[RMDB]
RNA sequence: GGGAACGACUCGAGUAGAGUCGAAAACAGCAGGAAUCAAUAAAACUCGUGACGAGACUUGCUAGUUGAGCGAUGAAUCAAGUGCAGUCCCGUCGGUCUUGAUAAUCGCCCGCCAUCACGUCCUAUCGAAGUAUAAGUCUUUCGAGACUUAUACUUCAAAAGAAACAACAACAACAAC
Reactivity to 2A3 in 0.01 (KOAc 150mM, MgCl2 10mM, bicine 150mM(pH8.5), 24C), signal-to-noise 8, nucleotides 027 to 126: c010a000g020c000a000g030g050a050a030u070c040a070a110u190a260a150a040a050c080u090c110g140u110g060a040c080g020a010g020a050c030u070u100g010c010u030a080g110u040u110g030a040g010c060g080a090u090g070a100a180u050c030a040a000g060u050g130c020a020g060u030c030c020c010g060u040c040g010g040u020c010u010u040g020a030u050a080a040u030c030g020c010c000c010g020c020c000a040u060c010a020c030g040u020c010c010u080a110u160c080
Reactivity to DMS in 0.01 (KOAc 150mM, MgCl2 10mM, bicine 150mM(pH8.5), 24C), signal-to-noise 7, nucleotides 027 to 126: c090a080g000c040a030g010g010a130a120u000c070a100a100u000a070a070a090a100c080u000c090g000u010g010a080c090g000a050g000a130c010u010u010g010c010u010a070g010u000u000g000a040g020c050g010a090u000g000a110a080u000c020a010a030g000u000g010c030a060g000u000c030c020c030g010u000c050g010g010u010c040u000u010g000a050u010a090a060u000c060g000c020c010c010g010c030c030a050u000c060a060c070g010u000c000c030u000a080u010c160
Structure probing data (2A3 and DMS) for a 177-nucleotide construct. High 2A3 reactivity points to a flexible backbone, as in loops and unpaired stretches. The reactions ran in a buffer of 150 mM KOAc, 10 mM MgCl2 and 150 mM bicine (pH 8.5), at 24 C. For 2A3 the reverse transcriptase was SuperScript II with manganese. For 2A3, 12,372 sequencing reads were counted.